The record gives the reactivity of an RNA of 177 nucleotides to 2A3 and DMS. Source: RMDB library OK1LIB, as collected in RNAgym. Conditions: 150 mM KOAc, 10 mM MgCl2 and 150 mM bicine (pH 8.5), 24 C. DMS adducts were read by reverse transcription with MarathonRT.
[RMDB]
RNA sequence: GGGAACGACUCGAGUAGAGUCGAAAAGCUAACCCACCGGAGAAAGGGUAUUACGGCGGCGUGGAUGGUGGUGACGGUGGGCUCGCCAACAAAGGGCAGGCCGCUCUGCAGGGCAAUGACGCAGCGCCGCCUGACUGAUUUUCGAAUCAGUCAGGCGAAAAGAAACAACAACAACAAC
Reactivity to 2A3 in 0.01 (KOAc 150mM, MgCl2 10mM, bicine 150mM(pH8.5), 24C), signal-to-noise 3, nucleotides 027 to 126: g080c060u090a140a120c000c000c000a010c010c020g140g000a070g070a060a090a040g160g020g010u110a070u130u250a050c060g030g010c030g000g000c050g060u060g000g090a060u100g020g030u040g010g040u050g010a030c020g010g000u030g040g020g000c040u060c040g050c040c010a030a060c040a080a130a080g070g000g000c010a000g080g010c040c020g040c060u050c040u000g090c040a060g000g060g020c000a020a080u080g010a030c050g020c060a040g040c000g000c000
Reactivity to DMS in 0.01 (KOAc 150mM, MgCl2 10mM, bicine 150mM(pH8.5), 24C), signal-to-noise 2, nucleotides 027 to 126: g000c120u040a100a110c040c010c000a070c030c010g040g000a050g000a060a080a090g000g010g050u010a110u020u000a100c080g030g020c040g000g050c070g000u010g000g000a130u020g000g000u010g000g030u010g000a050c070g000g000u000g000g000g000c090u000c020g040c040c000a040a090c300a080a100a080g000g000g010c000a040g000g010c070c050g000c020u030c030u000g000c130a090g010g000g000c040a120a140u030g000a090c080g000c000a190g000c000g000c000